[RMDB]
RNA sequence: GGGAACGACUCGAGUAGAGUCGAAAAACCUGUUCGCAGGUCCAGAAGAUAUGGAGUAAGGUUGCCUACCGCACGCGUUGAAAGGGAAUCGGAAACGAUUCCCUGGAGCGUGGCGGUAUAAGCUUACUCCUAAGUCCACAGCGGUUUUCGAACCGAAAGCCAGUCUAUAUUUCGAUAUAGACUGGCUAAAAGAAACAACAACAACAAC
Reactivity to DMS in 0.01 (KOAc 150mM, MgCl2 10mM, bicine 150mM(pH8.5), 24C), signal-to-noise 2, nucleotides 027 to 156: a070c000c020u020g020u000u000c260g020c000a070g030g030u000c030c010a170g010a160a100g040a110u000a260u000g010g000a070g010u000a020a040g020g010u000u000g010c090c110u000a000c020c010g010c010a040c000g010c000g060u000u010g010a150a220a040g020g040g040a020a020u010c020g000g050a050a070a260c000g060a030u000u000c020c000c010u000g000g000a120g030c020g010u010g040g020c000g010g090u000a010u000a050a070g020c000u000u000a000c020u000c000c020u010a000a070g020u000c020c040a100c070a100g020c040g000g000u020u000u010u010c220g010a170a130c080c000g010a090a130
Reactivity to 2A3 in 0.01 (KOAc 150mM, MgCl2 10mM, bicine 150mM(pH8.5), 24C), signal-to-noise 5, nucleotides 027 to 156: a000c010c000u020g020u030u050c230g030c070a010g020g030u020c030c010a130g040a160a030g000a090u070a050u150g000g010a000g000u000a000a010g060g190u170u110g090c020c050u010a010c010c000g000c010a090c020g010c010g160u240u060g030a040a010a000g000g000g000a000a000u010c000g030g020a030a050a040c010g000a000u020u000c000c010c000u000g010g000a010g000c000g010u020g040g040c000g010g000u000a000u000a000a000g020c000u000u000a000c010u000c000c000u000a010a000g010u000c000c020a080c010a110g140c060g020g030u030u010u060u090c080g060a030a010c030c020g060a170a060